The record gives the reactivity of an RNA of 207 nucleotides to DMS and 2A3. 2A3 is a SHAPE reagent: it acylates the 2'-hydroxyl of flexible nucleotides of all four kinds. Conditions: 150 mM KOAc, 10 mM MgCl2 and 150 mM bicine (pH 8.5), 24 C. The 2A3 profile rests on 2,106 reads.
[RMDB]
RNA sequence: GGGAACGACUCGAGUAGAGUCGAAAAGAUAUGGAGUUGAGGGAGUUCGCCCAGACCGAUGAAAGGACAUCGGAAACGAUGUCCUGGAGGUCUGGUGCGAACAUCGAUCUCAACUCCUAAGUCAAAAGAAAGAGUGCCGUUCGCGGCACUCUUUCAAUCAUUUAAACGGAUUCGUCCGUUUAAAUGAAAAAGAAACAACAACAACAAC
Reactivity to DMS in 0.01 (KOAc 150mM, MgCl2 10mM, bicine 150mM(pH8.5), 24C), signal-to-noise 1, nucleotides 027 to 156: g000a090u000a300u000g010g000a050g000u020u010g000a040g010g000g000a060g020u000u000c010g050c010c040c000a050g010a040c000c000g030a160u000g010a160a120a060g020g000a010c000a010u000c000g030g000a030a080a200c020g030a020u010g000u000c070c010u000g000g010a130g020g000u000c000u000g000g020u010g020c000g020a000a010c000a040u000c080g000a090u010c010u010c000a010a000c010u000c020c010u000a000a060g010u000c020a130a110a160a170g000a040a020a060g010a030g060u010g000c000c010g050u010u020c300g000c040g020g060c000a000c000u000c020u000u000u000c000a060a100
Reactivity to 2A3 in 0.01 (KOAc 150mM, MgCl2 10mM, bicine 150mM(pH8.5), 24C), signal-to-noise 1, nucleotides 027 to 156: g010a020u060a040u120g000g000a010g020u000u010g000a000g010g050g000a040g020u000u000c000g030c000c030c000a000g000a010c000c010g240a300u040g010a000a010a010g020g000a000c000a000u000c000g000g000a020a000a010c010g000a000u000g000u000c000c010u010g000g010a010g010g020u010c010u000g020g000u120g010c060g000a000a000c000a010u030c010g000a020u060c000u000c010a000a000c000u000c000c000u000a010a000g030u010c000a040a030a030a130g010a000a000a000g000a000g010u000g000c040c000g060u060u110c280g020c040g110g000c000a000c000u000c010u000u000u000c000a000a000